The record gives the reactivity of an RNA of 207 nucleotides to 2A3. For 2A3 the reverse transcriptase was SuperScript II with manganese. The reactions ran in a buffer of 150 mM KOAc, 10 mM MgCl2 and 150 mM bicine (pH 8.5), at 24 C.
RNA sequence: GGGAACGACUCGAGUAGAGUCGAAAACCGGUCUUCGGACCGGGUCAAGGGGUCAAACACAUCGAUCUUGUCAGCUAACACUGAAGCCUCCACGGUGUUUAGCUUGGAUUUAGGGAGUGUUUGACGGAGGCACCCAGUAUGUGCGGUUCGCCGCAAAACGGGUGACAGAAUUCGUUCUGUCACCCGUAAAAGAAACAACAACAACAAC
Reactivity to 2A3 in 0.01 (KOAc 150mM, MgCl2 10mM, bicine 150mM(pH8.5), 24C), signal-to-noise 1, nucleotides 027 to 156: c000c000g000g000u000c000u030u040c180g120g000a000c000c000g000g000g010u030c080a070a150g070g020g050g040u030c000a000a010a050c060a060c080a300u090c100g220a180u070c070u260u300g110u240c000a000g000c000u000a000a000c000a030c000u060g040a130a000g040c020c000u000c000c000a030c000g000g000u000g090u080u030u100a010g000c000u000u070g000g010a110u090u300u300a250g160g000g000a050g000u000g000u030u010u010g000a000c020g000g000a000g000g000c000a000c000c000c000a090g010u300a110u260g090u030g040c030g030g040u030u150c190g160c090c000g040c000a000a090a000